The record gives the reactivity of an RNA of 177 nucleotides to DMS and 2A3. For 2A3, 1,822 sequencing reads were counted. The RNA was probed in 150 mM KOAc, 10 mM MgCl2 and 150 mM bicine (pH 8.5) at 24 C. For 2A3 the reverse transcriptase was SuperScript II with manganese. Reactivities are rounded to 0.1 and cut off at 0 and 3. It was measured as part of the RMDB library OK1LIB.
RNA sequence: GGGAACGACUCGAGUAGAGUCGAAAACUUAUCAAACCAGAUCCAAAUUACGUUCACGACCUCGAUGAUGUUCGCCCGGAGCUGUUCACACAGAUCCUCGUGGACGGAGAAACUGAGUUCGUACCGGAGAGACUCUGUAGUUCGCUACAGAGUCUCUAAAAGAAACAACAACAACAAC
Reactivity to DMS in 0.01 (KOAc 150mM, MgCl2 10mM, bicine 150mM(pH8.5), 24C), signal-to-noise 2, nucleotides 027 to 126: c120u010u000a020u000c050a010a110a130c110c070a090g010a040u000c070c080a000a080a090u000u000a100c000g000u000u000c050a040c100g000a040c140c030u020c000g010a050u030g040a180u020g040u000u020c070g000c020c010c150g000g010a020g000c000u000g020u000u080c140a180c210a080c030a010g000a050u000c070c020u060c300g010u000g030g000a010c060g000g000a140g000a040a070a080c160u000g000a050g020u000u000c040g020u000a030c040c010g030g000
Reactivity to 2A3 in 0.01 (KOAc 150mM, MgCl2 10mM, bicine 150mM(pH8.5), 24C), signal-to-noise 3, nucleotides 027 to 126: c050u070u130a070u180c080a000a060a070c040c030a070g020a090u030c030c020a060a040a090u190u160a080c040g010u000u040c060a010c070g020a010c000c010u040c110g040a090u080g010a030u060g100u050u050c020g030c010c020c010g060g000a020g000c020u030g020u140u160c060a020c010a020c010a110g010a070u020c030c000u030c030g030u050g000g010a010c010g030g000a080g040a000a140a010c040u110g000a010g040u030u050c030g000u040a050c040c030g070g010